RNA sequence: GGGAACGACUCGAGUAGAGUCGAAAACAUGCGGGUAGUACAACUUACAAUUGUGGUAAGCGUAUUACCGGUGGAGUUCUUAUGUGUGAUUAAAUACUUGUAUUUUUUCAUAUGUUCCUCCUAUUUAAGUUCUUACAUCAUUCGUGAUGUAAGAACUAAAAGAAACAACAACAACAAC
Reactivity to 2A3 in 0.01 (KOAc 150mM, MgCl2 10mM, bicine 150mM(pH8.5), 24C), signal-to-noise 9, nucleotides 027 to 126: c070a020u300g210c070g040g020g000u010a000g010u000a000c010a220a050c090u010u000a000c010a090a300u200u260g120u190g260g000u010a000a000g000c010g020u000a000u000u000a000c000c000g000g000u050g010g000a030g010u050u030c030u050u060a040u060g020u000g000u000g010a010u000u020a000a000a010u020a030c060u100u150g080u060a030u010u010u000u000u000u010c010a010u020a010u040g020u000u010c010c000u010c000c000u100a190u070u140u050a070
Reactivity to DMS in 0.01 (KOAc 150mM, MgCl2 10mM, bicine 150mM(pH8.5), 24C), signal-to-noise 4, nucleotides 027 to 126: c060a060u030g030c040g020g000g010u000a000g010u000a000c000a130a140c010u000u000a000c000a120a210u030u050g030u030g020g010u000a000a000g020c300g000u000a000u000u000a000c000c010g000g050u000g010g000a060g010u000u000c030u000u000a030u010g010u000g030u000g000a010u000u000a000a010a000u000a010c020u050u000g010u000a000u000u000u000u000u000u000c000a020u000a000u010g010u000u000c030c010u000c050c050u020a120u020u010u000a080